[RMDB]
RNA sequence: GGGAACGACUCGAGUAGAGUCGAAAAUGCGAAUUCGUUCGCAAAUUUUCCUAAGUCUUUCCCGUUUGACGUAGGAGGGAGAGUUUGUCGGAAACGACAGGGCUCGAAGAACUCCUACCGAGGGAAAGAUAUGGAUUGCCACUACCUUCGGGUAGAAAUAUAGAUAAUCCUUCGGGAUUAUCUAUAUAAAAGAAACAACAACAACAAC
Reactivity to DMS in 0.01 (KOAc 150mM, MgCl2 10mM, bicine 150mM(pH8.5), 24C), signal-to-noise 2, nucleotides 027 to 156: u000g000c000g010a010a030u000u010c290g040u000u000c010g000c000a040a040a150u000u010u020u000c020c000u010a100a140g020u000c010u000u010u000c010c010c020g040u000u000u000g010a110c160g030u000a010g030g010a050g010g030g000a200g000a050g020u000u000u010g010u000c000g040g010a180a140a260c020g010a050c000a070g030g020g020c010u010c000g000a100a120g010a130a190c010u000c000c000u000a010c000c000g010a100g000g000g010a020a010a020g040a020u010a010u000g020g000a160u000u020g010c020c050a180c000u000a010c010c000u000u010c290g060g010g000u000a010g000a100a160
Reactivity to 2A3 in 0.01 (KOAc 150mM, MgCl2 10mM, bicine 150mM(pH8.5), 24C), signal-to-noise 4, nucleotides 027 to 156: u030g000c000g020a010a010u070u100c200g050u110u000c010g000c000a020a090a050u070u070u020u020c010c000u030a160a040g010u010c000u000u010u000c000c000c000g120u120u190u230g080a060c060g000u000a010g000g000a000g000g010g000a050g000a000g010u000u070u080g000u000c000g000g050a120a080a090c010g010a010c000a010g070g110g030c000u000c010g030a100a020g020a030a020c000u000c000c000u000a010c010c000g050a080g000g000g000a010a000a000g000a000u010a020u040g010g020a020u040u070g250c000c210a060c020u230a000c000c000u030u070c300g090g000g000u020a010g030a000a020

Record summary: The record gives the reactivity of an RNA of 207 nucleotides to DMS and 2A3.